[RMDB]
RNA sequence: GGGAACGACUCGAGUAGAGUCGAAAAGGAGAAUGGAUGACCACUGAGGACAUGCUCAUGGUGUGGAAUAGAGUGUGGAUUGAGGAGAACGACCAUAUGGAGGACAAGACUCCUGUAACAAAAUGGAGCAAUGGCCUUCAUUCGUGAAGGCCAUUGCAAAAGAAACAACAACAACAAC
Reactivity to DMS in 0.01 (KOAc 150mM, MgCl2 10mM, bicine 150mM(pH8.5), 24C), signal-to-noise 2, nucleotides 027 to 126: g000g000a050g020a070a110u010g000g010a040u000g030a170c140c070a140c180u000g000a010g000g010a040c040a110u010g000c020u000c110a050u010g030g000u010g050u000g030g030a070a060u000a000g000a010g010u070g030u000g000g000a060u010u000g010a160g000g000a030g080a080a120c240g010a160c110c020a040u000a030u050g020g030a110g000g000a130c190a050a130g000a150c040u000c030c000u030g000u010a050a120c300a040a110a020a040u000g000g020a150
Reactivity to 2A3 in 0.01 (KOAc 150mM, MgCl2 10mM, bicine 150mM(pH8.5), 24C), signal-to-noise 1, nucleotides 027 to 126: g000g000a020g010a050a000u050g000g010a000u060g120a000c000c000a120c110u010g000a040g030g010a040c040a040u230g070c000u000c040a040u100g000g020u080g020u050g050g020a000a080u050a090g070a000g000u090g000u040g000g010a050u000u040g000a000g080g000a050g030a050a030c070g040a000c030c000a000u000a080u250g040g000a020g030g000a000c040a020a020g040a000c000u010c000c020u000g040u050a060a070c060a010a040a050a090u180g110g000a080